The record gives the reactivity of an RNA of 207 nucleotides to DMS and 2A3. For DMS the reverse transcriptase was MarathonRT.
[RMDB]
RNA sequence: GGGAACGACUCGAGUAGAGUCGAAAACGGCCCCAGCUUCAAGUGGGAGCUUCCAGGUCUGUGGUUUGCAGGAAGGGACAUGGCAGCCCACAGGGAUGUGGGGCCAGCUGGUGAGGGGCGGAGCCUUAAUCAGGCAUGUGGCCUGGCAGUCUGGCUACAUAUUAAAAUGGUUCGCCAUUUUAAUAUGAAAAGAAACAACAACAACAAC
Reactivity to DMS in 0.01 (KOAc 150mM, MgCl2 10mM, bicine 150mM(pH8.5), 24C), signal-to-noise 2, nucleotides 027 to 156: c060g020g000c000c000c000c000a090g000c040u020u000c050a080a130g030u000g000g020g010a230g010c030u000u000c020c020a070g020g010u000c010u000g020u010g020g020u010u010u030g020c080a150g010g020a160a130g010g000g010a050c110a070u010g010g030c050a100g000c020c000c010a020c010a090g020g030g010a100u000g020u000g030g040g020g040c000c000a010g000c010u000g000g010u000g010a060g000g020g000g020c060g010g000a170g020c010c020u010u010a090a120u000c040a040g010g020c000a110u000g010u000g010g010c000c000u000g010g010c090a090g030u000c020u000g000g020c020u000a180
Reactivity to 2A3 in 0.01 (KOAc 150mM, MgCl2 10mM, bicine 150mM(pH8.5), 24C), signal-to-noise 3, nucleotides 027 to 156: c040g010g000c000c020c000c000a100g150c030u080u050c100a190a070g010u020g000g020g020a050g220c010u010u030c010c010a030g020g040u000c040u050g140u120g140g170u180u260u300g070c110a050g000g090a070a050g100g010g000a010c010a020u020g020g010c020a010g020c000c000c000a000c000a020g120g030g000a020u100g030u060g090g000g010g000c010c000a000g010c010u040g000g000u060g040a050g010g010g000g020c050g040g040a050g020c000c000u040u060a070a070u110c010a010g020g000c020a030u130g050u080g140g010c000c020u030g030g000c020a010g030u040c020u040g020g000c010u040a030

Overview:
Conditions: 150 mM KOAc, 10 mM MgCl2 and 150 mM bicine (pH 8.5), 24 C.